[RMDB]
The data come from the RNA Mapping Database (RMDB), library OK1LIB. An RNA of 177 nucleotides, treated with 2A3 and DMS and read out base by base. For 2A3, 3,757 sequencing reads were counted. 2A3 adducts were read by reverse transcription with SuperScript II with manganese.
RNA sequence: GGGAACGACUCGAGUAGAGUCGAAAACGGUCAUGGCAGCUGACCAGCGCGAUGCUGGUUGGUAAUGCGAUCGGACUGCUAGCGGGGGUGGCGUGCAGCGUGCUGGUGCAUGCCCGGAUCCGUCCGGCUUGUCGAGGGAAUUCGUUCCCUCGACAAGAAAAGAAACAACAACAACAAC
Reactivity to 2A3 in 0.01 (KOAc 150mM, MgCl2 10mM, bicine 150mM(pH8.5), 24C), signal-to-noise 5, nucleotides 027 to 126: c020g010g010u050c060a140u190g120g000c000a010g000c020u010g010a000c000c000a000g000c060g010c120g180a120u300g000c000u000g000g000u000u010g000g000u070a230a030u040g010c020g020a040u060c030g010g030a010c010u050g050c040u060a040g040c020g020g010g000g000g100u300g020g040c010g000u020g020c000a040g040c040g090u250g100c130u230g030g060u020g010c000a000u010g000c000c000c000g000g010a020u020c000c010g030u030c020c010g030g020
Reactivity to DMS in 0.01 (KOAc 150mM, MgCl2 10mM, bicine 150mM(pH8.5), 24C), signal-to-noise 2, nucleotides 027 to 126: c050g000g010u000c000a130u000g030g030c030a070g000c010u020g000a000c000c000a020g010c030g020c290g000a130u040g000c000u000g000g010u000u000g020g000u000a040a070u030g000c020g020a100u020c110g000g010a070c030u010g000c100u000a040g010c030g020g000g000g000g040u040g010g000c010g070u000g030c010a040g000c050g010u010g020c210u040g000g020u000g000c000a020u000g000c030c020c020g000g000a140u040c020c020g000u000c020c030g040g000
Reactivities are rounded to 0.1 and cut off at 0 and 3. The RNA was probed in 150 mM KOAc, 10 mM MgCl2 and 150 mM bicine (pH 8.5) at 24 C. For DMS, 4,185 sequencing reads were counted. 2A3 is a SHAPE reagent: it acylates the 2'-hydroxyl of flexible nucleotides of all four kinds.